[RMDB]
RNA sequence: GGGAACGACUCGAGUAGAGUCGAAAACCUCGCCGCACCGGCGUCCUAACCCCGUCCCGUGGAGCCGGGCGGGGGACCGUGCCAGGUGGGCAGUUUGACUGGGGCGGUCGCCUCCUAAAAGGUAACGCUGUCAUACCAAAUUCGUUUGGUAUGACAGAAAAGAAACAACAACAACAAC
Reactivity to DMS in 0.01 (KOAc 150mM, MgCl2 10mM, bicine 150mM(pH8.5), 24C), signal-to-noise 4, nucleotides 027 to 126: c030c020u010c180g000c010c010g010c010a030c010c000g020g000c010g020u020c020c020u000a150a300c010c000c000c000g000u020c000c010c000g010u030g020g000a110g020c280c050g010g000g010c020g000g000g000g000g010a020c270c140g000u020g020c000c010a100g060g030u010g000g010g000c010a080g000u010u000u000g020a070c080u000g020g020g010g010c020g000g000u020c060g020c030c020u010c030c030u030a060a050a150a060g000g010u020a080a110c150g010
Reactivity to 2A3 in 0.01 (KOAc 150mM, MgCl2 10mM, bicine 150mM(pH8.5), 24C), signal-to-noise 5, nucleotides 027 to 126: c000c000u020c070g000c000c000g140c000a010c010c010g010g000c010g040u040c010c000u060a050a030c000c000c010c000g150u300c070c020c000g030u130g180g080a050g110c080c000g000g010g000c000g000g000g000g000g000a010c000c010g000u020g010c000c040a050g000g000u010g000g010g000c010a010g030u080u160u150g090a070c070u070g000g000g030g000c030g090g090u210c160g020c010c010u060c030c010u170a150a070a020a010g090g030u070a090a010c050g000